[RMDB]
RNA sequence: GGGAACGACUCGAGUAGAGUCGAAAAUGCUCAGUUGAUGAAUCAUAGCCCUGGGUCAGAAUUCUUUAUGCCACACCCUACUGUUUUACAUUGUCCUUAGUAAUUUUUGCUGACUGGACUUGGCAAAAUAUUCUAGUAAGAUAAUUUGAAGGUCAUGAUUACCUUUUGGUUUCGACCAAAAGGUAAUAAAAGAAACAACAACAACAAC
Reactivity to DMS in 0.01 (KOAc 150mM, MgCl2 10mM, bicine 150mM(pH8.5), 24C), signal-to-noise 2, nucleotides 027 to 156: u000g020c010u000c030a150g020u000u010g000a130u000g010a130a120u010c030a090u000a130g020c030c020c020u000g000g000g000u010c030a110g000a110a110u000u000c060u010u000u000a060u020g020c020c040a100c060a060c040c020c000u000a070c050u010g010u000u000u000u000a090c070a060u000u000g040u000c030c040u000u000a060g020u030a060a100u000u010u000u000u010g000c000u000g010a050c010u010g060g020a060c030u000u030g020g020c010a010a020a030a040u010a120u000u000c020u010a110g020u000a050a050g000a070u000a030a090u010u000u000g010a110a060g020g020u000c040a100u010g000
Reactivity to 2A3 in 0.01 (KOAc 150mM, MgCl2 10mM, bicine 150mM(pH8.5), 24C), signal-to-noise 3, nucleotides 027 to 156: u090g000c030u030c050a040g010u070u080g050a090u050g010a110a120u080c070a080u150a080g030c030c030c020u040g040g000g000u050c050a030g080a090a090u150u050c010u100u220u110a100u090g040c020c020a050c010a010c030c000c020u040a060c050u070g030u030u050u030u020a050c050a030u040u090g040u040c010c000u040u010a020g010u060a070a170u030u040u040u040u040g010c000u000g030a040c040u050g060g030a070c000u020u020g010g000c000a000a000a000a090u110a020u090u000c010u030a000g070u060a140a070g020a080u080a080a090u220u120u190g080a040a020g050g020u050c030a010u110g060
About this RNA
The record gives the reactivity of an RNA of 207 nucleotides to DMS and 2A3. Conditions: 150 mM KOAc, 10 mM MgCl2 and 150 mM bicine (pH 8.5), 24 C. For DMS the reverse transcriptase was MarathonRT. 2A3 adducts were read by reverse transcription with SuperScript II with manganese. It was measured as part of the RMDB library OK3TST.